[RMDB]
RNA sequence: GGGAACGACUCGAGUAGAGUCGAAAAGAUGACGAGUCGGUCGGCUCCGCGCUAGGUUUGGUCGCCUAGGGGAUGGAGAUAUGGAAAGGGUCUCGUGUGCUGUCAGUCGGUCGAAAGACGCGCUUGCUCCGCGAAGAAUAUUCGUAUUCUUCGCGGAAAAAGAAACAACAACAACAAC
Reactivity to DMS in 0.01 (KOAc 150mM, MgCl2 10mM, bicine 150mM(pH8.5), 24C), signal-to-noise 4, nucleotides 027 to 126: g010a070u020g010a120c060g000a050g010u010c020g000g030u000c050g010g000c020u000c030c010g010c040g010c020u000a020g020g000u010u010u000g020g020u030c180g010c010c020u010a030g010g000g040g040a120u020g010g010a030g000a070u030a070u040g000g000a070a100a080g000g000g010u010c020u030c040g010u000g030u020g010c010u000g000u000c070a050g000u020c020g000g000u000c030g000a060a120a080g000a060c020g000c080g000c020u000u000g000c270
Reactivity to 2A3 in 0.01 (KOAc 150mM, MgCl2 10mM, bicine 150mM(pH8.5), 24C), signal-to-noise 4, nucleotides 027 to 126: g100a060u120g030a020c030g010a000g020u040c010g000g010u030c000g020g000c010u020c010c010g030c000g010c010u010a010g000g040u080u070u160g080g010u060c030g000c010c000u000a010g010g020g040g000a050u090g040g040a040g010a060u100a090u140g080g040a060a080a030g030g010g020u010c000u000c030g030u050g020u040g050c030u040g040u050c010a010g040u050c010g030g010u020c020g010a040a020a010g070a020c010g010c010g010c080u030u060g010c010